[RMDB]
RNA sequence: GGGAACGACUCGAGUAGAGUCGAAAAAUUGCUGCUCGUCCAGGUAUGGGUAAAACCGAACUGGCGCUGAAGAUAGCCGAAGGCGUGGCAAGUCGUGUUAUUCCUGGUUCUGGCGUCCGGCGCGGUGUCCAUUACGUCGGUUCGCCGACGUAAUGGAAAAAGAAACAACAACAACAAC
Reactivity to DMS in 0.01 (KOAc 150mM, MgCl2 10mM, bicine 150mM(pH8.5), 24C), signal-to-noise 2, nucleotides 027 to 126: a070u010u010g020c010u010g010c020u000c100g000u000c000c010a050g000g000u000a080u020g000g000g010u000a080a040a090a160c000c000g020a060a110c010u010g020g020c040g030c050u000g010a120a120g000a120u010a110g000c060c010g000a120a160g010g020c040g000u010g010g030c060a060a040g000u010c040g020u000g020u000u010a300u020u000c020c020u010g020g000u000u010c030u000g010g000c000g020u010c070c020g000g000c070g020c060g010g030u010g030
Reactivity to 2A3 in 0.01 (KOAc 150mM, MgCl2 10mM, bicine 150mM(pH8.5), 24C), signal-to-noise 1, nucleotides 027 to 126: a020u060u120g010c010u020g010c000u010c080g180u120c060c000a030g030g020u150a060u110g070g000g020u090a100a120a070a040c020c020g010a050a030c010u000g000g000c030g000c000u030g000a080a030g030a070u220a110g150c010c070g060a050a000g030g000c020g000u010g000g040c060a040a020g060u050c070g010u010g150u290u090a150u120u030c000c020u060g080g070u150u050c020u020g000g040c040g000u060c040c010g050g040c000g000c030g020g040u110g060